[RMDB]
RNA sequence: GGGAACGACUCGAGUAGAGUCGAAAAUCAUCUCACUCCUCACCUUCCAUCUUCUAAUCUGCAAAAUGUGUGUCUAGUAAGUCCUAGUCAUGGGGUGUUGUGAAAAUUGAAUUUCUAGUAGGAGCAUUUUCAUGUGACCUGCACAUUUAAUGGGUGAGAGUUUUACGUAUUUCGAUACGUAAAACUCAAAAGAAACAACAACAACAAC
Reactivity to 2A3 in 0.01 (KOAc 150mM, MgCl2 10mM, bicine 150mM(pH8.5), 24C), signal-to-noise 4, nucleotides 027 to 156: u070c010a040u030c010u020c060a000c030u010c020c000u050c030a070c000c030u040u070c040c030a080u040c060u160u020c050u100a100a090u050c070u110g060c070a090a060a110a180u040g060u010g010u000g040u030c000u020a030g020u090a150a100g030u040c010c020u020a020g030u060c010a100u070g020g000g000g010u020g050u010u110g030u020g010a050a040a030a050u060u060g020a030a050u070u090u050c080u090a080g020u030a030g070g060a010g020c010a020u070u070u120u150c070a040u050g030u050g150a210c020c010u020g050c010a010c010a050u100u210u240a110a050u100g010g010g020u030g020a030
Reactivity to DMS in 0.01 (KOAc 150mM, MgCl2 10mM, bicine 150mM(pH8.5), 24C), signal-to-noise 2, nucleotides 027 to 156: u000c060a130u000c040u010c010a120c110u020c020c020u000c040a100c050c000u070u000c030c010a090u020c060u030u080c040u010a080a080u000c010u020g080c080a040a110a090a070u010g050u000g040u000g010u000c000u000a060g040u010a060a140g020u000c060c000u000a080g010u010c060a110u000g010g010g060g000u000g020u000u000g020u000g000a050a010a120a060u000u000g010a120a080u000u000u000c020u000a100g050u000a060g040g010a300g000c010a050u020u020u000u000c150a050u000g040u000g040a140c020c000u000g040c020a060c030a020u000u000u000a070a020u000g020g000g060u000g010a150
This 207-nucleotide RNA was probed chemically with 2A3 and DMS. Reactivities are given for positions 27 through 156. Reactivities are rounded to 0.1 and cut off at 0 and 3. 2A3 is a SHAPE reagent: it acylates the 2'-hydroxyl of flexible nucleotides of all four kinds. The RNA was probed in 150 mM KOAc, 10 mM MgCl2 and 150 mM bicine (pH 8.5) at 24 C. The data come from the RNA Mapping Database (RMDB), library OK3TST. For DMS the reverse transcriptase was MarathonRT.